[RMDB]
RNA sequence: GGGAACGACUCGAGUAGAGUCGAAAAGCGUAACGGCUGGGUGUAACCCAACUCUAGGUGUGCUGAUUAGCGGGCUUGACUCCGUAACAAAUAGGCACUGGUGGUAAAAAGCAUCCCACCUACACACAAAGCUCCAAAUUCUUCGGAAUUUGGAGAAGUAUAAAGAGAGGUUCGCCUCUCUUUAUACAAAAGAAACAACAACAACAAC
Reactivity to DMS in 0.01 (KOAc 150mM, MgCl2 10mM, bicine 150mM(pH8.5), 24C), signal-to-noise 2, nucleotides 027 to 156: g000c020g020u020a130a130c100g000g120c010u010g010g000g050u030g050u000a080a300c000c010c000a020a070c100u000c090u000a070g050g020u000g020u000g010c020u010g020a180u000u000a140g040c050g000g020g010c030u000u010g000a120c050u000c010c010g020u010a080a160c060a090a050a150u000a090g010g000c020a030c050u000g000g050u000g000g020u010a090a050a060a060a110g000c050a100u000c020c000c010a080c080c020u000a070c050a080c010a090c080a050a090a150g020c010u020c000c010a010a000a020u000u010c000u020u000c300g040g010a030a010u000u000u000g050g010a000g010a000a030
Reactivity to 2A3 in 0.01 (KOAc 150mM, MgCl2 10mM, bicine 150mM(pH8.5), 24C), signal-to-noise 4, nucleotides 027 to 156: g020c000g010u050a030a050c040g130g010c050u040g040g060g020u050g030u060a090a080c010c010c070a060a150c050u080c070u140a040g050g060u040g020u040g050c020u020g020a100u080u030a020g000c000g020g030g010c040u110u140g040a140c050u000c050c010g010u020a040a000c020a020a100a030u150a070g010g020c000a010c070u030g000g010u040g000g010u060a110a120a070a010a020g080c030a050u050c010c000c000a010c000c010u060a030c060a010c010a010c030a030a140a050g020c000u000c000c000a000a000a000u000u000c000u000u020c040g100g010a000a000u000u000u010g010g000a000g000a000a010